Chemical mapping of a 207-nucleotide RNA with 2A3. The 2A3 profile rests on 919 reads. 2A3 adducts were read by reverse transcription with SuperScript II with manganese. The RNA was probed in 150 mM KOAc, 10 mM MgCl2 and 150 mM bicine (pH 8.5) at 24 C.
RNA sequence: GGGAACGACUCGAGUAGAGUCGAAAAAGGUUCGCUGUGGUGCAACUCUUAUUAGUAUCUAAUCCAAAGCAAGUAUAGGAGAACAGGUUUUUAACUAUUUUUAGGCAGAUAAAAAAUAGUAUUUGACAAAAUCGAUUGUCGUUCGCGACAAUCGAAAGAGAUCUUUCUUGUUCGCAAGAAAGAUCUCAAAAGAAACAACAACAACAAC
Reactivity to 2A3 in 0.01 (KOAc 150mM, MgCl2 10mM, bicine 150mM(pH8.5), 24C), signal-to-noise 2, nucleotides 027 to 156: a000g010g030u060u030c040g000c010u010g030u040g030g000u000g000c000a030a070c010u030c030u160u070a170u070u070a090g040u030a090u170c130u070a080a090u020c100c050a000a090a040g020c020a030a040g000u030a040u070a100g050g030a050g010a030a070c080a060g000g000u020u000u000u000u140a020a000c000u000a030u000u000u000u050u020a020g010g040c010a020g020a140u110a050a060a000a000a000a000u020a000g010u030a070u070u130u170g030a040c010a020a140a020a120u000c000g000a000u000u000g000u020c000g010u040u000c220g000c010g090a000c000a000a000u020c000g000a000a000a000